[RMDB]
RNA sequence: GGGAACGACUCGAGUAGAGUCGAAAAGUGGCGGAAGUGGCGGUCAUAGGACUAAUGCUCGUCGCUACGGCGGAGCGGGCGGUGACGGAUACGUCCUGAUCGAGUGGGAAUGACUCGCGCUUGACACGUAACCCGGUUACGAGUAAAGUCGCCUGCGACCCAAAUCCUAUUUCGAUAGGAUUUGGGUAAAAGAAACAACAACAACAAC
Reactivity to DMS in 0.01 (KOAc 150mM, MgCl2 10mM, bicine 150mM(pH8.5), 24C), signal-to-noise 4, nucleotides 027 to 156: g020u000g020g000c020g020g000a120a100g010u000g020g030c130g030g000u010c030a140u000a110g010g020a090c040u000a080a170u010g000c010u000c030g010u010c020g030c010u000a050c060g030g000c070g030g010a190g020c030g020g000g030c030g030g000u020g010a070c050g000g020a180u000a060c110g000u000c020c020u020g020a090u000c000g010a060g030u010g030g020g000a180a170u010g010a100c040u010c020g020c050g000c010u000u000g000a080c040a090c040g020u000a060a070c020c030c060g030g000u000u000a060c050g010a140g030u000a070a070a120g010u000c000g010c020c010u010g020c030g000
Reactivity to 2A3 in 0.01 (KOAc 150mM, MgCl2 10mM, bicine 150mM(pH8.5), 24C), signal-to-noise 6, nucleotides 027 to 156: g050u030g040g040c050g050g060a130a060g020u040g050g000c040g000g000u030c030a050u120a130g100g070a050c060u110a080a050u110g010c020u010c020g050u040c010g000c000u030a000c090g060g010c020g040g020a070g030c010g000g010g010c010g000g010u030g020a020c020g000g020a020u050a080c080g030u030c000c030u050g000a100u040c020g010a010g020u080g010g110g080a060a150u140g030a060c020u000c070g020c000g010c020u010u040g020a020c000a000c070g000u010a020a060c050c110c040g020g020u040u050a030c030g020a030g060u110a030a060a060g030u040c000g000c000c010u020g020c020g020
This 207-nucleotide RNA was probed chemically with DMS and 2A3.
The reactions ran in a buffer of 150 mM KOAc, 10 mM MgCl2 and 150 mM bicine (pH 8.5), at 24 C.
Source: RMDB library OK3TST, as collected in RNAgym.